[RMDB]
RNA sequence: GGGAACGACUCGAGUAGAGUCGAAAAGCUGUCCUGGACCUGUUGGCACCACAGACAGUUGCUCUGCUGUGCCUGUGGCCUCGGGGCAAAGAGAAAGUGGCGAUUUCUACACUCAGUGCUCGGGAACUAUGGGGAGAUAAUUCGUUAUCUCCCCAUAAAAAGAAACAACAACAACAAC
Reactivity to DMS in 0.01 (KOAc 150mM, MgCl2 10mM, bicine 150mM(pH8.5), 24C), signal-to-noise 8, nucleotides 027 to 126: g010c050u010g000u000c010c020u010g010g000a100c020c010u010g000u020u010g010g000c040a050c030c110a070c060a030g000a050c050a220g020u020u020g010c140u000c040u000g000c150u020g000u010g000c030c010u010g020u010g000g010c020c020u020c010g020g010g000g010c020a060a070a110g000a090g000a040a070a050g000u000g010g000c030g000a110u000u000u010c030u000a170c160a070c030u000c030a100g010u010g000c030u000c020g010g000g000a160a090c150
Reactivity to 2A3 in 0.01 (KOAc 150mM, MgCl2 10mM, bicine 150mM(pH8.5), 24C), signal-to-noise 7, nucleotides 027 to 126: g040c020u020g020u030c010c000u010g010g030a060c000c010u090g060u230u060g120g020c030a030c020c020a000c020a010g020a010c010a070g070u090u110g050c060u040c030u060g020c010u010g010u000g070c010c020u150g070u060g100g010c000c030u090c030g000g000g000g000c030a010a090a000g130a010g010a000a050a010g020u030g020g020c020g020a030u030u180u000c010u030a020c010a010c040u030c040a070g040u030g060c020u010c020g030g010g000a070a040c030
The record gives the reactivity of an RNA of 177 nucleotides to DMS and 2A3. 2A3 adducts were read by reverse transcription with SuperScript II with manganese. The RNA was probed in 150 mM KOAc, 10 mM MgCl2 and 150 mM bicine (pH 8.5) at 24 C. DMS (dimethyl sulfate) methylates the pairing face of unpaired adenines and cytosines.